[RMDB]
RNA sequence: GGGAACGACUCGAGUAGAGUCGAAAAGAGAUCAGCUAAGAACAAAUGCCUGGUCUUCCAUACCAAAGGGGCCGUAGCCUUGGACUAGAAAUGAAGUGGUGAGAAGCGGCAAAUUCAAGAGGAGGAGGUAAAGCCAGAUUUUCGAAUCUGGCUUUACAAAAGAAACAACAACAACAAC
Reactivity to DMS in 0.01 (KOAc 150mM, MgCl2 10mM, bicine 150mM(pH8.5), 24C), signal-to-noise 2, nucleotides 027 to 126: g010a060g000a010u000c020a010g030c040u010a110a090g010a120a230c220a100a170a170u030g000c230c010u000g000g010u010c010u000u010c070c000a140u000a090c040c040a040a150a140g020g010g000g020c090c250g000u000a120g000c030c030u000u000g000g010a070c070u000a170g020a030a060a100u020g010a080a120g000u020g000g010u010g020a050g000a090a080g040c050g000g010c060a060a030a050u000u010c040a030a090g000a140g020g000a090g010g000a100g000